[RMDB]
RNA sequence: GGGAACGACUCGAGUAGAGUCGAAAAUCAUUGAGAUGCUGGGCGCUAUGGUCGUCCUCCUCCGGCUGACCUCCUUCUCAGCUGCUGACCGGCGCCGCACAGGCUGCAUCUCAGCUUCGUGUGCAAAAAAAGAAUGGUCGGUUCGCCGACCAUUCAACGUAUAUUUCCUCUUCGGAGGAAAUAUACGAAAAGAAACAACAACAACAAC
Reactivity to 2A3 in 0.01 (KOAc 150mM, MgCl2 10mM, bicine 150mM(pH8.5), 24C), signal-to-noise 3, nucleotides 027 to 156: u150c060a060u080u090g000a010g000a010u060g010c040u070g010g030g000c020g020c020u080a220u300g020g000u040c030g070u060c020c050u050c020c010u060c020c010g000g000c010u000g000a050c020c070u180c010c030u270u120c040u010c030a010g000c010u010g030c080u110g010a010c020c000g010g000c010g020c000c010g000c010a050c010a010g090g030c020u020g000c030a020u020c020u000c000a000g010c020u130u150c090g090u060g020u020g060c060a130a020a000a050a000a000a050g000a000a000u000g000g000u010c000g000g060u040u050c190g040c080c000g000a000c000c000a000u000u000c000a010a000
Reactivity to DMS in 0.01 (KOAc 150mM, MgCl2 10mM, bicine 150mM(pH8.5), 24C), signal-to-noise 2, nucleotides 027 to 156: u000c070a110u020u000g000a030g010a020u000g020c000u000g030g010g000c030g010c010u000a030u010g050g040u010c020g000u000c040c040u000c030c030u010c050c040g000g010c010u050g020a040c050c090u000c140c130u000u000c070u000c000a010g010c020u010g020c070u000g010a040c010c020g010g030c000g070c010c010g000c060a080c100a090g000g000c050u000g000c010a050u000c030u000c010a050g010c070u000u000c100g020u000g000u000g000c030a010a000a080a140a070a100a220g000a030a020u000g010g010u000c000g020g000u000u000c300g030c010c000g010a020c000c000a010u000u000c000a030a160

This 207-nucleotide RNA was probed chemically with 2A3 and DMS. Conditions: 150 mM KOAc, 10 mM MgCl2 and 150 mM bicine (pH 8.5), 24 C. For 2A3 the reverse transcriptase was SuperScript II with manganese.